The data come from the RNA Mapping Database (RMDB), library M2PK50.
The record gives the reactivity of an RNA of 177 nucleotides to 2A3.
The 2A3 profile rests on 753 reads.
For 2A3 the reverse transcriptase was SuperScript II with manganese.
The reactions ran in a buffer of 150 mM KOAc, 10 mM MgCl2 and 150 mM bicine (pH 8.5), at 24 C.
RNA sequence: GGGAACGACUCGAGUAGAGUCGAAAAGACCUUCAGUUCGCUGAAGGUCGAUGAUGGUAAGAGAGAUUACCAUCUGUUAAGUGAUAUGGAUAUGAUCUCUCAGUGAACGUGCUUUCGAGCACGUUAAGGACCCUUCACCUUUCGAGGUGAAGGGUCCAAAAGAAACAACAACAACAAC
Reactivity to 2A3 in 0.01 (KOAc 150mM, MgCl2 10mM, bicine 150mM(pH8.5), 24C), signal-to-noise 1, nucleotides 027 to 126: g000a000c000c000u000u010c040a030g030u020u090c130g000c100u000g000a000a000g010g000u000c010g010a000u050g010a010u010g020g050u060a070a000g040a000g000a000g000a000u000u000a000c000c000a010u000c000u040g040u030u150a220a140g110u090g210a040u070a030u300g190g000a070u040a160u300g020a010u080c000u000c000u010c000a010g010u090g240a010a000c040g010u000g000c010u240u000u030c240g030a000g000c010a000c000g000u010u000a010a000